[RMDB]
RNA sequence: GGGAACGACUCGAGUAGAGUCGAAAACGCCCUAUGGCAAGGACGGGAUUCUGCCUAUCAGGCAUGAACUAAGCGGUCGCGUAGCGGCCACCUCCCCAUUUAUUGCAAUUGCUUCGCAAUUGUAAAAUUCACAUAAAGACUUCGGUCUUUAUGUGAAAAAAGAAACAACAACAACAAC
Reactivity to 2A3 in 0.01 (KOAc 150mM, MgCl2 10mM, bicine 150mM(pH8.5), 24C), signal-to-noise 9, nucleotides 027 to 126: c090g050c000c000c010u050a070u070g070g000c090a080a030g050g010a020c100g030g020g030a040u040u000c010u020g000c010c000u120a290u210c120a040g000g000c030a030u220g010a030a030c030u100a080a040g100c060g040g000u020c000g000c070g120u110a040g020c000g010g000c010c000a000c000c000u030c000c000c000c010a020u080u170u180a170u080u060g000c000a000a000u000u010g000c020u110u140c190g000c010a000a000u000u000g000u010a010a010a000a050
Reactivity to DMS in 0.01 (KOAc 150mM, MgCl2 10mM, bicine 150mM(pH8.5), 24C), signal-to-noise 5, nucleotides 027 to 126: c200g020c010c000c020u010a060u020g010g010c160a100a070g020g000a070c080g010g000g010a250u000u000c010u000g000c000c000u010a130u040c260a070g010g010c000a020u020g000a040a070c060u010a090a100g020c090g030g000u000c010g010c020g020u010a090g020c040g010g000c010c030a060c040c020u000c010c020c000c050a110u010u010u030a100u020u000g000c020a010a020u000u000g000c010u020u020c270g000c000a010a010u000u000g000u000a010a020a130a180
An RNA of 177 nucleotides, treated with 2A3 and DMS and read out base by base. In probing experiments dimethyl sulfate is read out at A N1 and C N3, which are open when not base-paired. Values are in units of 0.01, from 0 to 300, in steps of 10.